Source: RMDB library TTRINS, as collected in RNAgym.
Chemical mapping of a 177-nucleotide RNA with DMS.
For DMS, 11,391 sequencing reads were counted.
The RNA was probed in 150 mM KOAc, 10 mM MgCl2 and 150 mM bicine (pH 8.5) at 24 C.
DMS adducts were read by reverse transcription with MarathonRT.
RNA sequence: GGGAACGACUCGAGUAGAGUCGAAAAGAUAUGGACGGAAACAUAGCUUAAGAAAUUCGAUAAGCUGGUGUCGGAAACGACACACAGCUUUUGACGAAUUCUUAAGCUAUGUUUCCGUCCUAAGUCAGACAUAAUGAUAGUUCGCUAUCAUUAUGUCAAAAGAAACAACAACAACAAC
Reactivity to DMS in 0.01 (KOAc 150mM, MgCl2 10mM, bicine 150mM(pH8.5), 24C), signal-to-noise 5, nucleotides 027 to 126: g010a060u000a300u000g010g000a020c000g020g000a020a000a010c000a000u000a010g010c000u000u010a010a010g000a050a030a070u000u000c000g020a190u000a020a010g030c000u000g000g010u000g010u000c000g010g000a120a100a260c010g000a000c000a000c000a080c010a000g010c000u000u000u000u000g020a210c180g000a020a020u000u000c000u000u000a000a000g000c010u000a000u000g000u010u000u000c000c000g010u000c000c000u000a010a060g010u010c070a150
Values cover nucleotides 27 to 126.